Chemical mapping of a 177-nucleotide RNA with 2A3 and DMS. Source: RMDB library OK2TRN, as collected in RNAgym.

RNA sequence: GGGAACGACUCGAGUAGAGUCGAAAACAGGGGGAGAGUCUCCAGCCCCGUGGCAACAAACAACAUCGAUUCACUGGCAACACUCCACUUUCUCUCUGAGGUCUUCAUUGCUCCUUGGUGCAACAGGGCGACCUAAAUAAUUCGUUAUUUAGGUCGCAAAAGAAACAACAACAACAAC
Reactivity to 2A3 in 0.01 (KOAc 150mM, MgCl2 10mM, bicine 150mM(pH8.5), 24C), signal-to-noise 3, nucleotides 027 to 126: c000a020g010g000g020g000g010a060g010a010g070u000c010u000c050c000a010g010c010c000c000c020g060u030g050g020c070a090a020c020a070a210a020c040a020a030c000a090u110c050g060a050u080u070c030a010c050u020g000g030c010a060a020c030a050c080u020c040c010a040c030u050u060u000c030u000c000u000c010u030g050a040g050g050u000c020u020u060c060a060u030u190g010c010u040c010c020u040u090g050g010u070g030c030a110a060c020a080g020g130
Reactivity to DMS in 0.01 (KOAc 150mM, MgCl2 10mM, bicine 150mM(pH8.5), 24C), signal-to-noise 4, nucleotides 027 to 126: c060a080g000g010g020g000g020a130g010a110g010u000c060u000c040c030a120g020c020c020c030c050g020u000g000g010c060a070a040c090a050a050a070c130a050a050c120a060u000c050g010a100u000u010c070a060c050u000g000g010c070a060a050c100a090c050u010c030c040a070c070u000u000u010c020u000c010u000c030u000g000a070g020g010u000c040u010u000c090a080u000u000g000c050u010c010c020u020u000g010g010u000g020c060a020a080c100a080g000g020